[RMDB]
RNA sequence: GGGAACGACUCGAGUAGAGUCGAAAAACAGUCAAUUCAGAAGGUUCAGGCCGAGUUUGACAGCUUUGUGGUACCGAGCCUGUGGUCGUCCGGGUUGUCAAGUAGACGGUGCUGCCUGCGGCUCAACAGCAUAUUAAGUAUUCGUACUUAAUAUGCUAAAAGAAACAACAACAACAAC
Reactivity to 2A3 in 0.01 (KOAc 150mM, MgCl2 10mM, bicine 150mM(pH8.5), 24C), signal-to-noise 9, nucleotides 027 to 126: a000c040a020g080u060c040a040a090u260u100c040a070g090a180a030g120g020u210u200c040a020g050g000c000c010g020a020g030u010u040u040g020a010c000a010g010c020u080u140u280g160u180g060g030u080a050c020c020g040a050g130c030c090u250g060u140g060g020u040c050g030u000c010c010g030g010g000u020u020g020u020c010a010a030g030u030a030g070a060c020g000g020u050g070c010u010g010c000c000u030g020c020g040g000c010u020c070a050a120c030
Reactivity to DMS in 0.01 (KOAc 150mM, MgCl2 10mM, bicine 150mM(pH8.5), 24C), signal-to-noise 9, nucleotides 027 to 126: a090c110a090g010u020c050a060a080u020u020c090a110g010a110a050g010g010u020u030c050a050g010g000c000c010g010a100g000u010u000u000g000a020c020a040g010c030u000u010u040g050u030g020g010u020a040c050c030g000a120g010c100c090u020g020u030g000g000u000c060g000u010c020c020g000g000g010u000u010g000u000c020a030a030g010u010a080g020a100c030g010g000u000g000c030u000g000c060c010u000g010c100g010g000c030u000c090a080a100c200
Description
The data come from the RNA Mapping Database (RMDB), library OK1LIB. An RNA of 177 nucleotides, treated with 2A3 and DMS and read out base by base. For DMS, 49,784 sequencing reads were counted. 2A3 adducts were read by reverse transcription with SuperScript II with manganese. As a SHAPE reagent, 2A3 marks flexible, mostly unpaired nucleotides at the ribose 2'-OH. Reactivities are given for positions 27 through 126.